Annotation:
Chemical mapping of a 177-nucleotide RNA with DMS. Reactivities are given for positions 27 through 126. The data come from the RNA Mapping Database (RMDB), library OK2TRN.

RNA sequence: GGGAACGACUCGAGUAGAGUCGAAAAAGGCGUGAGCCGCUGCACCUGGCCAGGCCUUCCAGCUUUCUCACCCACACACAGACCUGCCUAGGCACAGGUGCAUGCCUCUGGCCUGGUCUAUGCCUCAAUCUCCUCUGAGCUUCGGCUCAGAGGAGAUAAAAGAAACAACAACAACAAC
Reactivity to DMS in 0.01 (KOAc 150mM, MgCl2 10mM, bicine 150mM(pH8.5), 24C), signal-to-noise 1, nucleotides 027 to 126: a040g000g010c010g030u010g010a090g010c120c140g030c120u000g020c000a000c020c010u000g010g040c000c020a090g020g030c020c140u000u000c050c060a110g000c130u000u010u000c030u000c090a120c040c000c020a100c150a100c110a050c180a050g000a080c050c080u020g030c000c020u000a090g000g010c020a060c010a020g000g020u010g020c010a050u010g030c010c000u000c050u000g000g040c010c010u000g010g020u010c000u000a120u010g010c020c000u010c120a140